[RMDB]
RNA sequence: GGGAACGACUCGAGUAGAGUCGAAAAGGUGUCAGUCCCCACAGAUGCUCAUCCAUGCCAGGUGCCAGCACAAUCCCAGGUCAGGGAGGGGUCUGCCCGGUCUGGCUCAGGGUCAGUGGACUCACGACCUGAGCUACCUGUGGAGGUGUUAAACAGACAAUACGUGACCAUUCGUGGUCACGUAUUGAAAAGAAACAACAACAACAAC
Reactivity to DMS in 0.01 (KOAc 150mM, MgCl2 10mM, bicine 150mM(pH8.5), 24C), signal-to-noise 1, nucleotides 027 to 156: g000g050u000g010u010c030a150g000u000c010c000c020c120a130c090a080g040a050u020g050c020u020c000a120u000c060c050a160u000g020c060c060a050g000g010u000g050c020c010a080g000c030a120c070a150a130u000c010c010c000a220g010g050u020c140a230g040g010g010a120g000g040g070g070u000c130u000g020c030c000c020g000g020u000c000u000g060g000c030u000c060a110g000g000g000u000c060a170g010u010g020g010a130c120u030c040a100c050g000a080c010c020u000g000a050g020c020u000a040c040c000u030g010u010g000g000a090g020g010u000g000u010u000a060a040a120c100a130g000a220
Reactivity to 2A3 in 0.01 (KOAc 150mM, MgCl2 10mM, bicine 150mM(pH8.5), 24C), signal-to-noise 3, nucleotides 027 to 156: g140g010u110g090u200c030a010g040u050c030c000c010c000a030c010a020g110a090u020g000c000u030c010a050u000c050c050a090u140g090c050c040a040g000g000u070g050c110c020a010g010c030a020c050a080a050u010c020c010c020a020g020g200u180c070a030g030g060g000a040g010g010g040g030u000c040u000g040c000c020c010g010g000u010c040u040g010g000c000u000c070a060g070g080g000u120c070a150g000u080g000g120a210c130u090c230a040c000g020a020c000c020u020g000a000g000c000u010a030c000c000u060g010u080g020g020a080g040g000u060g050u110u140a060a120a020c030a010g130a020